[RMDB]
RNA sequence: GGGAACGACUCGAGUAGAGUCGAAAAAGCGGCGGCAGUUCACCUGCCUGUUCCACCCCGUGCUGUUCAACCACGGCGUCGUGGCGCUGGAGGACGGCUUCUUGGACGCGGCGGAGCUGCGGCGGCUAAACUACCGGCGUCGGGAGCUGGGGCUGCCUCAAUCUGAUUCGUUCGCGAAUCAGAUUGAAAAAGAAACAACAACAACAAC
Reactivity to 2A3 in 0.01 (KOAc 150mM, MgCl2 10mM, bicine 150mM(pH8.5), 24C), signal-to-noise 2, nucleotides 027 to 156: a000g040c080g070g010c020g010g000c010a020g030u100u160c070a040c080c000u090g080c000c020u020g020u110u000c010c000a060c000c040c000c010g080u030g020c030u110g020u190u120c090a130a110c060c020a010c010g000g030c060g110u110c090g040u100g030g030c010g000c020u010g010g030a020g030g010a040c020g030g000c030u030u050c040u150u220g120g010a010c040g040c040g020g010c020g130g060a080g000c000u020g010c060g060g000c010g010g010c000u040a100a100a000c020u110a170c010c000g090g000c010g010u050c030g030g010g020a010g000c000u060g000g000g040g000c000u020g000c000c020